An RNA of 207 nucleotides, treated with DMS and 2A3 and read out base by base. The RNA was probed in 150 mM KOAc, 10 mM MgCl2 and 150 mM bicine (pH 8.5) at 24 C. The data come from the RNA Mapping Database (RMDB), library OK3TST. 2A3 adducts were read by reverse transcription with SuperScript II with manganese.
RNA sequence: GGGAACGACUCGAGUAGAGUCGAAAAACAUCCAGCAAAAGAUAAGGCAUGUUAGCAGGAGAGAGUGCUGAGUUUGCCCCAGAAGACAAUACCAAUGGAGUUAUUAAUGAUUUGCCAUGGUUGAUGUUCCUCUUCUGGGUCCUAGGUCAUCAACCCCACUAGCAUCCAUGUUCGCAUGGAUGCUAGUAAAAGAAACAACAACAACAAC
Reactivity to DMS in 0.01 (KOAc 150mM, MgCl2 10mM, bicine 150mM(pH8.5), 24C), signal-to-noise 2, nucleotides 027 to 156: a060c020a110u000c010c030a170g030c040a030a050a100a080g000a100u000a090a090g010g030c020a070u010g010u000u010a100g030c080a140g020g010a120g000a110g000a100g000u000g020c030u000g010a140g010u000u000u000g000c060c000c000c010a050g010a050a030g020a070c060a080a090u000a080c030c020a060a090u000g010g020a120g010u010u000a120u000u000a040a140u010g000a100u000u010u000g010c030c020a110u010g030g000u000u000g000a090u000g000u020u000c110c020u000c030u000u000c020u000g020g010g000u000c010c050u000a060g040g020u000c040a060u000c070a110a100c000c020c030c070
Reactivity to 2A3 in 0.01 (KOAc 150mM, MgCl2 10mM, bicine 150mM(pH8.5), 24C), signal-to-noise 5, nucleotides 027 to 156: a000c020a040u070c040c010a010g030c050a070a090a040a040g060a050u140a090a040g030g000c040a040u070g030u130u110a050g000c040a030g040g040a050g000a010g020a010g030u040g010c030u030g010a020g090u060u150u100g020c010c000c000c000a000g010a010a000g010a020c060a070a100u060a120c020c020a040a050u060g030g010a050g100u080u070a090u130u150a180a130u180g120a120u050u100u210g060c030c020a020u030g010g010u030u050g010a060u080g040u070u090c040c030u020c020u030u000c000u030g000g000g000u000c000c010u020a010g050g000u030c010a030u030c000a080a070c000c000c000c010